[RMDB]
RNA sequence: GGGAACGACUCGAGUAGAGUCGAAAAGUGAUUGUGAGUAAGCGGCAAUACUGCGUAUCAAGUAAUGUCACAUCAUGAUGAUUACAGUGCUGCUUCACAACUUCAGCAUAGGGGAAUGGCGGAAUCGCUACGAGAGCCAGUUCGCUGGCUCUCGUAGAAAAGAAACAACAACAACAAC
Reactivity to DMS in 0.01 (KOAc 150mM, MgCl2 10mM, bicine 150mM(pH8.5), 24C), signal-to-noise 2, nucleotides 027 to 126: g000u000g010a060u010u030g000u000g030a090g040u050a150a050g000c030g000g010c020a110a050u010a300c010u010g010c030g000u040a020u000c050a050a090g000u000a150a020u010g020u010c220a150c160a020u040c090a000u000g010a130u000g000a020u000u010a210c020a000g000u000g000c000u000g020c010u000u000c000a010c010a020a000c140u010u000c030a050g000c050a050u020a110g000g000g000g000a070a060u040g000g010c050g020g010a020a110u030c060g050
Reactivity to 2A3 in 0.01 (KOAc 150mM, MgCl2 10mM, bicine 150mM(pH8.5), 24C), signal-to-noise 3, nucleotides 027 to 126: g060u090g020a240u030u040g000u010g000a010g020u160a150a020g040c010g020g000c040a010a140u100a270c000u030g020c100g100u020a040u050c030a090a040g070u100a090a060u070g040u100c070a060c010a260u190c020a040u120g040a010u050g000a000u020u100a010c000a000g020u010g040c010u020g000c000u010u010c000a000c000a040a010c050u100u100c050a070g010c050a040u160a130g000g030g000g000a100a160u070g040g010c020g000g070a060a050u170c060g020
An RNA of 177 nucleotides, treated with DMS and 2A3 and read out base by base. Reactivities are rounded to 0.1 and cut off at 0 and 3. The 2A3 profile rests on 1,471 reads. For 2A3 the reverse transcriptase was SuperScript II with manganese.